[RMDB]
RNA sequence: GGGAACGACUCGAGUAGAGUCGAAAAGAUGUGUUACUCCGAACCGACCGGCUGCCCGAUCCGCGGGCUGGCGUAGGCGGAUUCGCGGUCGGGGCUCGGGUAGAAGUUCGACUUGGGGAUGCCGGAGCCACCGUAAACUCUUCGGAGUUUACGGUGGAAAAGAAACAACAACAACAAC
Reactivity to DMS in 0.01 (KOAc 150mM, MgCl2 10mM, bicine 150mM(pH8.5), 24C), signal-to-noise 1, nucleotides 027 to 126: g000a040u000g000u000g010u000u000a050c040u050c030c010g000a060a070c050c010g000a130c030c020g000g000c000u020g030c000c070c120g000a010u010c000c000g040c010g020g000g000c040u030g000g000c050g010u010a050g000g000c000g000g010a170u040u000c020g030c000g000g030u000c010g040g050g000g000c150u000c000g020g010g010u000a030g020a080a060g020u000u000c050g000a080c040u050u030g000g000g050g000a140u020g000c040c010g000g000a120g000
Reactivity to 2A3 in 0.01 (KOAc 150mM, MgCl2 10mM, bicine 150mM(pH8.5), 24C), signal-to-noise 2, nucleotides 027 to 126: g150a030u200g030u030g050u110u050a030c000u050c020c010g090a070a040c000c000g130a120c000c000g070g000c200u110g040c020c000c000g000a060u070c040c000g080c040g010g000g040c030u090g110g010c000g080u140a110g030g070c020g030g050a190u070u020c010g020c050g000g020u010c010g010g000g010g000c050u040c050g000g030g010u090a050g040a170a010g040u080u100c060g100a090c110u050u090g020g000g000g050a030u040g020c040c010g020g000a000g020